[RMDB]
RNA sequence: GGGAACGACUCGAGUAGAGUCGAAAAACCUUUGUGCAACGUUUCCAUGUUGUCAGAGCGAAUGGAACCCAUUGGGUUCCACUCGCUCUUGGAUUUACAUGGGCCGUUGCACUCUGGUAAACUCACUAGAGCCCUGUUCGCAGGGCUCUAGUGAGAACUCUAAGUGAAUGUUCGCAUUCACUUAGAGAAAAGAAACAACAACAACAAC
Reactivity to 2A3 in 0.01 (KOAc 150mM, MgCl2 10mM, bicine 150mM(pH8.5), 24C), signal-to-noise 1, nucleotides 027 to 156: a000c000c000u000u010u010g000u010g020c000a010a000c000g020u080u300u070c020c000a000u000g000u000u030g020u010c000a010g000a000g000c000g010a010a000u010g010g010a000a000c110c000c060a150u210u300g030g000g000u030u040c000c030a000c010u010c010g000c010u050c020u010u040g000g010a010u170u080u240a020c000a000u000g000g000g000c010c000g000u000u000g000c000a000c000u000c000u000g000g000u000a040a060a070c000u000c000a000c000u000a000g000a000g020c000c000c000u000g010u040u050c090g000c030a000g010g010g000c000u000c010u010a000g070u000g000a000g000a000a000

Overview: Structure probing data (2A3) for a 207-nucleotide construct. It was measured as part of the RMDB library RNAMAK. Conditions: 150 mM KOAc, 10 mM MgCl2 and 150 mM bicine (pH 8.5), 24 C. As a SHAPE reagent, 2A3 marks flexible, mostly unpaired nucleotides at the ribose 2'-OH.